[RMDB]
RNA sequence: GGGAACGACUCGAGUAGAGUCGAAAAUGAAUGGCUGACAUUCCACUUGAUGUAGCGAAUGAUGCAAUACCAUGCUCAAGUUUGGCAAAACAGGUUUCAAAUGUUGAGCGUGUAGGAUUUUUAGUACGUGGGUAUCACAGUUCGCUGUGAUACCCACAAAAGAAACAACAACAACAAC
Reactivity to 2A3 in 0.01 (KOAc 150mM, MgCl2 10mM, bicine 150mM(pH8.5), 24C), signal-to-noise 2, nucleotides 027 to 126: u200g090a060a020u060g060g000c030u030g080a100c000a070u020u000c020c000a100c050u090u200g120a140u100g020u010a000g050c120g100a000a020u030g000a030u160g110c010a040a000u030a180c010c010a020u050g000c000u050c030a000a000g030u000u000u000g020g020c020a020a020a300a140c140a150g200g000u080u080u000c000a000a000a010u210g120u260u000g030a000g000c010g000u000g000u120a120g000g150a180u130u220u000u000u160a110g050u020a070c160
Reactivity to DMS in 0.01 (KOAc 150mM, MgCl2 10mM, bicine 150mM(pH8.5), 24C), signal-to-noise 1, nucleotides 027 to 126: u040g010a070a050u060g000g000c090u010g000a260c300a000u000u000c000c010a050c040u000u010g000a030u000g080u050a080g010c080g000a140a000u000g010a140u000g000c010a090a000u000a090c170c040a080u000g000c000u020c050a000a050g000u000u020u000g000g000c110a050a000a100a150c200a050g000g040u000u000u060c000a020a000a010u000g020u000u000g000a030g000c000g010u000g000u020a170g000g000a140u000u000u000u000u000a080g010u040a050c230